[RMDB]
RNA sequence: GGGAACGACUCGAGUAGAGUCGAAAAGAUAUGGAAAGAACUACAAUGACGCUUCGACGAUCUCGGAAACGAGGGAGAAGCGAGAACAUUGCUUUCCUAAGUCAAAAGGAUAAGUUCGCUUAUCCAACAGUGACUAUAACUUCGGUUAUAGUCACUGAAAAGAAACAACAACAACAAC
Reactivity to 2A3 in 0.01 (KOAc 150mM, MgCl2 10mM, bicine 150mM(pH8.5), 24C), signal-to-noise 4, nucleotides 027 to 126: g020a020u080a020u120g010g000a040a010a000g020a070a060c080u140a070c300a020a010u030g080a090c020g000c020u010u000c000g290a300c010g020a070u020c000u020c000g020g020a080a080a060c000g000a010g000g000g000a020g000a010a010g000c020g010a010g000a020a010c000a000u010u000g010c010u010u000u000c000c010u010a170a000g040u030c040a060a030a090a140g000g000a010u000a010a010g020u030u120c260g090c140u000u010a010u000c000c000a000a020
Reactivity to DMS in 0.01 (KOAc 150mM, MgCl2 10mM, bicine 150mM(pH8.5), 24C), signal-to-noise 4, nucleotides 027 to 126: g030a020u000a300u010g000g000a000a000a020g000a090a050c120u020a300c030a010a010u000g010a210c010g030c020u010u000c000g000a080c190g010a020u010c010u000c000g010g010a100a110a140c010g020a020g020g010g000a040g010a020a000g010c000g000a030g010a100a090c020a010u000u000g000c000u000u010u000c000c000u000a040a170g000u000c020a070a060a100a120g010g000a010u000a010a020g010u000u010c240g010c000u000u000a010u000c000c000a110a140
Chemical mapping of a 177-nucleotide RNA with 2A3 and DMS. For DMS the reverse transcriptase was MarathonRT. For DMS, 4,187 sequencing reads were counted. The data come from the RNA Mapping Database (RMDB), library TTRDEL.